[RMDB]
RNA sequence: GGGAACGACUCGAGUAGAGUCGAAAAGAGCUAAUAUCUUGAGGCAUAGUGCAUACGUUCAAGCUGACUAUAUAGUACGUAAAGGUGCUCUAAAGGUGCUUCUAGGUAGUCGAAUGAACGGCUCGAAGGGUUAAGUAUACUUCGGUAUACUUAACCCAAAAGAAACAACAACAACAAC
Reactivity to DMS in 0.01 (KOAc 150mM, MgCl2 10mM, bicine 150mM(pH8.5), 24C), signal-to-noise 5, nucleotides 027 to 126: g000a070g000c020u010a080a050u020a020u010c000u020u000g030a100g000g000c020a090u030a070g000u010g000c060a140u000a230c050g010u010u000c040a030a040g010c110u030g000a040c030u010a080u040a080u010a040g000u030a050c220g030u010a060a130a090g000g040u010g020c030u000c100u080a090a160a300g000g020u000g000c020u000u010c030u000a030g010g030u000a000g010u000c030g010a250a250u010g010a010a040c000g010g000c010u000c020g010a050a140
Reactivity to 2A3 in 0.01 (KOAc 150mM, MgCl2 10mM, bicine 150mM(pH8.5), 24C), signal-to-noise 5, nucleotides 027 to 126: g030a000g010c030u070a070a010u040a130u110c020u020u090g030a020g010g010c030a040u060a020g050u050g030c020a040u050a130c010g030u010u040c020a020a010g010c010u020g040a040c020u020a010u030a020u050a180g070u090a030c120g080u100a010a070a110g040g000u020g000c000u000c010u070a080a050a030g050g000u030g010c000u010u020c010u030a020g020g020u010a010g000u030c020g010a040a020u060g020a020a000c000g010g000c000u000c040g030a140a070
Source: RMDB library OK1LIB, as collected in RNAgym.
Chemical mapping of a 177-nucleotide RNA with DMS and 2A3.
For DMS, 9,528 sequencing reads were counted.
For 2A3, 6,077 sequencing reads were counted.
Values are in units of 0.01, from 0 to 300, in steps of 10.
The RNA was probed in 150 mM KOAc, 10 mM MgCl2 and 150 mM bicine (pH 8.5) at 24 C.